[RMDB]
RNA sequence: GGGAACGACUCGAGUAGAGUCGAAAACACUGGUGUUCGGGUUGUCAUGCCAAUGGCAUUGCCCGGUAGCUAAAUUCGGAAGAGAUAACCGCUGAAAGCAUCUAAGCGGGAAACUUGCCUCGAGAUGCUUUAGUCGAGUUUUCGAACUCGACUAAAGAAAAGAAACAACAACAACAAC
Reactivity to 2A3 in 0.01 (KOAc 150mM, MgCl2 10mM, bicine 150mM(pH8.5), 24C), signal-to-noise 1, nucleotides 027 to 126: c030a000c060u050g010g040u040g060u220u150c020g000g020g030u060u000g020u030c010a020u020g100c060c040a160a080u050g010g000c000a010u000u140g060c000c010c000g000g040u030a000g000c020u040a030a220a190u160u150c070g070g040a080a050g040a090g010a090u040a100a100c000c000g010c000u000g020a120a100a000g040c020a000u040c020u050a000a030g010c010g000g050g020a060a040a040c010u020u100g030c000c000u070c020g070a060g000a060u050g000
Reactivity to DMS in 0.01 (KOAc 150mM, MgCl2 10mM, bicine 150mM(pH8.5), 24C), signal-to-noise 3, nucleotides 027 to 126: c070a110c170u010g010g020u000g000u020u010c020g000g010g000u000u010g050u000c030a030u020g050c200c300a130a050u000g010g000c010a040u010u010g000c020c010c020g010g000u020a120g000c040u010a060a070a100u000u030c030g010g010a100a120g010a110g000a060u000a050a160c030c030g030c020u000g000a070a110a100g000c060a010u000c030u000a220a080g020c010g000g000g030a090a060a130c050u000u000g010c300c050u000c090g000a030g010a070u000g000
Record summary:
An RNA of 177 nucleotides, treated with 2A3 and DMS and read out base by base. For 2A3 the reverse transcriptase was SuperScript II with manganese. The reactions ran in a buffer of 150 mM KOAc, 10 mM MgCl2 and 150 mM bicine (pH 8.5), at 24 C. It was measured as part of the RMDB library OK2TRN. DMS adducts were read by reverse transcription with MarathonRT.